An RNA of 207 nucleotides, treated with 2A3 and read out base by base. Values cover nucleotides 27 to 156. It was measured as part of the RMDB library M2RFPK. 2A3 adducts were read by reverse transcription with SuperScript II with manganese. Conditions: 150 mM KOAc, 10 mM MgCl2 and 150 mM bicine (pH 8.5), 24 C. Values are in units of 0.01, from 0 to 300, in steps of 10. For 2A3, 583 sequencing reads were counted.
RNA sequence: GGGAACGACUCGAGUAGAGUCGAAAAUCCACUAUGAAUCUAGUCAGUAAAUAAACACAAUUAGCUACUGUGUGUAAUAGUGAGUGUUGAUAACACAAAAUAAUAGUAUAGUUUUGGAAGAUUAUACGCGCCCUUGCUCCGUUCGCGGAGCAAGGAAGGACCUAUUUAGCUUCGGCUAAAUAGGUCCAAAAGAAACAACAACAACAAC
Reactivity to 2A3 in 0.01 (KOAc 150mM, MgCl2 10mM, bicine 150mM(pH8.5), 24C), signal-to-noise 2, nucleotides 027 to 156: u000c000c000a030c000u000a010u140g180a170a100u090c080u020a020g070u070c040a010g000u090a060a030a230u090a080a140a000c060a040c020a120a070u120u060a070g040c060u040a030c040u010g030u070g010u000g020u180a000a030u030a030g070u000g040a060g110u000g030u000u020g090a220u070a160a040c030a020c000a000a000a130a000u120a080a060u070a140g010u010a010u010a060g010u030u030u070u190g080g030a120a030g000a080u020u030a010u040a020c030g030c010g080c000c000c000u000u000g050c010u000c000c000g010u040u040c180g000c000g130g010a000g000c000a000a000g000g000a000a010